The data come from the RNA Mapping Database (RMDB), library OK2TST. The record gives the reactivity of an RNA of 177 nucleotides to DMS. DMS adducts were read by reverse transcription with MarathonRT. The reactions ran in a buffer of 150 mM KOAc, 10 mM MgCl2 and 150 mM bicine (pH 8.5), at 24 C.
RNA sequence: GGGAACGACUCGAGUAGAGUCGAAAAGGCUACAUCCUUACGGUCAUCAUGGGAGGGAAGGAAUGUUAGUGUGAAGUCCAUUGCUACUAGAGACCGAGAUAACCAGUACAUCUCCAUAGUUUUCGUAUAAUCAUCCGCGAUUCGUCGCGGAUGAUUAAAAAGAAACAACAACAACAAC
Reactivity to DMS in 0.01 (KOAc 150mM, MgCl2 10mM, bicine 150mM(pH8.5), 24C), signal-to-noise 1, nucleotides 027 to 126: g020g030c100u000a100c060a070u010c020c010u000u000a090c060g030g020u000c020a070u000c140a050u000g020g000g030a070g010g000g000a110a050g010g040a070a070u000g070u010u000a040g010u000g010u000g010a100a060g010u000c020c040a030u020u010g000c030u020a050c080u010a080g000a080g020a110c030c070g000a050g000a080u000a020a150c080c060a060g000u000a010c160a120u000c010u000c010c020a070u000a040g020u000u000u000u000c070g000u010a120